[RMDB]
Chemical mapping of a 177-nucleotide RNA with DMS and 2A3. The RNA was probed in 150 mM KOAc, 10 mM MgCl2 and 150 mM bicine (pH 8.5) at 24 C. Reactivities are given for positions 27 through 126. It was measured as part of the RMDB library OK2TRN. For 2A3 the reverse transcriptase was SuperScript II with manganese.
RNA sequence: GGGAACGACUCGAGUAGAGUCGAAAAAGCUCGUCGAGUUCGUCGAUCACGGCCGCGUAGGCGUCGCGAUGGCGCAUCAACUCGAUCAGCGUCCACGAAGCCGUACCCGAGCUGGUGUGAUGGCCGGCUGCUUUAAUGCGUUCGCGCAUUAAAGCAGAAAAGAAACAACAACAACAAC
Reactivity to DMS in 0.01 (KOAc 150mM, MgCl2 10mM, bicine 150mM(pH8.5), 24C), signal-to-noise 3, nucleotides 027 to 126: a120g000c020u000c220g050u000c000g010a030g010u010u000c010g020u000c030g030a060u000c040a030c000g010g010c030c100g030c180g020u010a140g000g020c010g030u000c020g020c040g000a060u000g000g010c020g010c300a040u000c120a040a040c060u010c020g000a050u000c250a050g000c000g000u010c000c000a070c010g000a050a040g020c010c000g000u000a070c000c020c000g010a080g020c060u010g040g010u000g020u020g000a050u010g010g000c010c030g010g010
Reactivity to 2A3 in 0.01 (KOAc 150mM, MgCl2 10mM, bicine 150mM(pH8.5), 24C), signal-to-noise 2, nucleotides 027 to 126: a000g000c010u020c010g030u000c010g010a020g010u090u090c000g000u010c020g110a030u020c010a010c050g030g000c080c000g040c070g110u240a120g130g150c020g050u040c000g000c020g020a030u030g010g010c000g000c020a100u100c030a020a060c020u010c050g000a020u010c020a000g020c000g030u000c010c010a040c030g030a020a000g030c030c020g040u030a040c020c000c060g030a060g090c060u090g090g020u100g040u050g070a080u060g030g020c020c020g020g040